Record summary
This 177-nucleotide RNA was probed chemically with DMS and 2A3. The 2A3 profile rests on 2,566 reads. It was measured as part of the RMDB library OK2TRN. The RNA was probed in 150 mM KOAc, 10 mM MgCl2 and 150 mM bicine (pH 8.5) at 24 C.

RNA sequence: GGGAACGACUCGAGUAGAGUCGAAAAGUGCUCUGAUUGGUCCUGAUAAGAAUCAAGAUGACGAGUUCUUUGACUUUCCAGUAUUUCAGCCUGAGUACAAAGAUUCAUUAGAGGAAUUUGAUGGGUGCUGGUUUAUUUUAUUCGUAAAAUAAACCAGAAAAGAAACAACAACAACAAC
Reactivity to DMS in 0.01 (KOAc 150mM, MgCl2 10mM, bicine 150mM(pH8.5), 24C), signal-to-noise 7, nucleotides 027 to 126: g020u000g000c010u010c020u000g010a100u000u000g010g010u000c020c000u010g010a180u010a110a050g000a030a030u000c020a030a020g010a180u000g000a250c300g000a040g000u000u000c010u010u000u000g010a160c180u000u000u000c020c020a170g010u000a040u000u010u010c040a100g010c080c070u000g000a090g000u000a050c050a090a070a110g010a030u000u000c020a050u000u010a090g000a080g010g020a060a080u000u000u000g000a080u000g000g010g020u000g020
Reactivity to 2A3 in 0.01 (KOAc 150mM, MgCl2 10mM, bicine 150mM(pH8.5), 24C), signal-to-noise 3, nucleotides 027 to 126: g000u000g000c010u000c000u030g070a070u040u040g040g000u010c030c010u020g040a150u080a260a040g020a130a040u020c010a040a010g150a300u060g030a010c020g000a030g030u030u000c020u050u040u050g090a120c040u040u020u030c020c000a050g060u070a190u050u180u100c040a040g040c020c000u050g050a030g050u090a060c020a040a090a030g020a020u030u030c030a010u090u210a040g030a040g130g110a120a100u050u090u130g040a050u100g030g000g040u030g060